Source: RMDB library OK3TST, as collected in RNAgym. This 207-nucleotide RNA was probed chemically with DMS and 2A3. DMS adducts were read by reverse transcription with MarathonRT. For 2A3, 4,748 sequencing reads were counted. As a SHAPE reagent, 2A3 marks flexible, mostly unpaired nucleotides at the ribose 2'-OH.
RNA sequence: GGGAACGACUCGAGUAGAGUCGAAAACGCAGCUCCUACCUGGCCAAUGAGAUCCUGUGGGGUCACCGCUUUGAGCCCGUGCUCUUCGAGGAGAAGAACCAGUACAAGAUUGACUACUCGCACUUCCACAAGACCUAUGAGGUGCCCUCUACGCCCCAUUCCCGUAAUAGUUCGCUAUUACGGGAAUAAAAGAAACAACAACAACAAC
Reactivity to DMS in 0.01 (KOAc 150mM, MgCl2 10mM, bicine 150mM(pH8.5), 24C), signal-to-noise 2, nucleotides 027 to 156: c070g000c050a100g000c010u000c020c000u000a060c030c020u030g030g000c010c020a080a160u000g010a170g010a100u010c010c020u000g040u010g020g000g040g020u000c080a070c050c040g010c040u000u000u010g010a110g020c030c040c090g000u000g020c010u000c020u000u000c050g030a180g000g010a200g000a070a060g000a040a050c020c050a080g010u000a110c070a070a100g010a150u000u020g020a100c040u000a100c050u000c010g000c050a050c030u000u010c040c000a050c060a060a070g000a000c050c020u000a110u000g020a060g000g040u000g000c000c010c000u000c030u000a130c030g010c010c000c020c050
Reactivity to 2A3 in 0.01 (KOAc 150mM, MgCl2 10mM, bicine 150mM(pH8.5), 24C), signal-to-noise 6, nucleotides 027 to 156: c030g010c030a010g010c000u040c010c030u030a070c030c020u040g040g000c020c020a110a100u120g040a060g010a120u060c010c030u070g020u110g040g040g020g000u040c020a020c050c030g060c060u080u050u110g040a030g020c020c020c030g040u080g020c000u030c010u100u080c050g070a090g030g050a040g020a060a030g020a030a040c030c030a020g020u090a070c030a110a060g030a180u080u130g050a100c020u040a010c000u010c030g020c030a030c010u050u020c020c010a060c020a110a050g050a090c020c030u080a100u140g020a020g030g000u020g010c010c010c010u010c020u020a030c040g040c000c000c000c000